An RNA of 177 nucleotides, treated with 2A3 and DMS and read out base by base. DMS adducts were read by reverse transcription with MarathonRT.
RNA sequence: GGGAACGACUCGAGUAGAGUCGAAAAGAUAUGGAGUGUUCAUGGGAGCAGGUAUUCGGAAACGAAUACCCUGCGACGAUCAUGACACUCCUAAGUCAAAAUCAGCGUAUCUUCGGAUACGCUGAAACUCAAGUUCUUUGUUCGCAAAGAACUUGAGAAAAGAAACAACAACAACAAC
Reactivity to 2A3 in 0.01 (KOAc 150mM, MgCl2 10mM, bicine 150mM(pH8.5), 24C), signal-to-noise 2, nucleotides 027 to 126: g000a000u020a010u070g010g000a000g040u010g030u210u150c030a010u000g010g000g130a130g040c000a010g000g000u010a000u000u020c000g000g000a010a030a020c000g000a000a000u010a030c070c050c020u030g020c020g000a060c130g010a110u030c010a010u000g000a000c000a000c010u000c000c000u000a010a010g010u020c000a030a000a020a300u050c000a000g000c000g000u000a000u000c020u050u190c300g190g010a000u010a010c000g040c000u000g010a000a000a000
Reactivity to DMS in 0.01 (KOAc 150mM, MgCl2 10mM, bicine 150mM(pH8.5), 24C), signal-to-noise 2, nucleotides 027 to 126: g000a000u000a130u010g000g000a000g030u000g010u020u000c030a020u000g000g030g020a070g030c000a030g010g020u000a010u000u010c000g030g000a060a020a100c000g000a020a000u000a000c180c140c060u010g010c000g030a120c300g010a100u000c000a030u010g010a020c010a000c000u000c000c000u000a010a050g010u000c010a100a060a130a160u000c010a000g010c010g020u000a010u000c000u000u030c270g010g010a010u000a010c010g020c010u000g000a010a030a130

Source information:
For DMS, 2,362 sequencing reads were counted. It was measured as part of the RMDB library TTRDES.